This 177-nucleotide RNA was probed chemically with 2A3 and DMS.

RNA sequence: GGGAACGACUCGAGUAGAGUCGAAAACCCUUAGCAUUCGUGCUAAGGGAAAUAACGGUCGGCUCAUGCAGCUAGUCGAAAAUGCUGCUGGACCUUUUGGUAAAAUCUGGCCGUUCGCGGCCAGAAACAAUCCACUUCUGUUCGCAGAAGUGGAUUGAAAAGAAACAACAACAACAAC
Reactivity to 2A3 in 0.01 (KOAc 150mM, MgCl2 10mM, bicine 150mM(pH8.5), 24C), signal-to-noise 2, nucleotides 027 to 126: c000c000c000u000u000a000g020c020a020u030u030c200g090u080g000c000u000a000a000g000g000g060a050a120a010u130a050a020c080g050g050u060c010g090g000c080u020c110a060u230g000c010a000g010c010u080a010g210u170c040g050a060a110a000a060u130g000c010u000g030c000u020g000g040a030c010c000u020u120u050u100g100g010u070a050a030a030a130u000c010u000g010g010c010c020g010u010u030c240g020c030g020g000c000c000a000g000a000a000a000
Reactivity to DMS in 0.01 (KOAc 150mM, MgCl2 10mM, bicine 150mM(pH8.5), 24C), signal-to-noise 3, nucleotides 027 to 126: c000c000c010u000u000a010g020c000a050u000u000c190g050u000g010c000u010a000a010g010g000g000a000a010a070u010a080a120c100g000g000u010c090g020g030c040u000c020a030u020g010c010a020g010c010u000a210g000u010c210g010a080a110a090a100u000g010c000u000g020c000u000g000g000a040c020c000u000u000u000u000g010g010u010a060a060a100a080u000c000u000g000g010c000c000g020u000u010c160g020c030g030g020c010c000a000g000a010a040a080
The reactions ran in a buffer of 150 mM KOAc, 10 mM MgCl2 and 150 mM bicine (pH 8.5), at 24 C. For 2A3 the reverse transcriptase was SuperScript II with manganese. Source: RMDB library M2PK50, as collected in RNAgym. Reactivities are given for positions 27 through 126. For DMS the reverse transcriptase was MarathonRT. High DMS reactivity at an A or C suggests that its Watson-Crick edge is free.